Structure probing data (DMS and 2A3) for a 177-nucleotide construct. 2A3 adducts were read by reverse transcription with SuperScript II with manganese. For DMS the reverse transcriptase was MarathonRT.
RNA sequence: GGGAACGACUCGAGUAGAGUCGAAAAGUAAUAUUACAGAUAAUAAACAACAGUGUUGCUUUAUCAAUAAUGCGACUACUGUAAUCAGCUCACCAUCUAAUAAAUCUGGAGGUGCUAUCCAGUGCUCCGAGAGGAUAUGAUUCGUCAUAUCCUCUCGAAAAGAAACAACAACAACAAC
Reactivity to DMS in 0.01 (KOAc 150mM, MgCl2 10mM, bicine 150mM(pH8.5), 24C), signal-to-noise 4, nucleotides 027 to 126: g020u010a070a120u000a080u000u000a080c030a080g010a170u010a100a100u010a110a110a090c130a100a080c040a050g020u000g010u000u000g020c050u000u000u000a140u020c200a070a150u000a040a050u000g000c060g010a010c020u000a080c020u010g000u000a060a030u000c100a180g000c090u000c050a100c030c040a050u000c100u000a090a080u000a020a080a060u000c030u000g000g020a040g000g000u010g010c130u010a080u020c020c010a030g020u000g010c130u000c090
Reactivity to 2A3 in 0.01 (KOAc 150mM, MgCl2 10mM, bicine 150mM(pH8.5), 24C), signal-to-noise 5, nucleotides 027 to 126: g010u000a010a160u080a030u280u060a020c020a010g060a020u090a250a040u080a080a290a020c030a060a010c000a060g060u000g010u060u010g000c020u090u050u090a160u230c140a140a180u100a150a020u080g010c000g050a000c010u120a020c000u050g010u010a010a020u050c040a000g000c010u020c020a060c030c010a050u050c030u090a120a150u090a200a210a070u050c020u020g000g000a000g040g070u140g080c030u040a050u060c010c010a030g040u040g070c020u040c040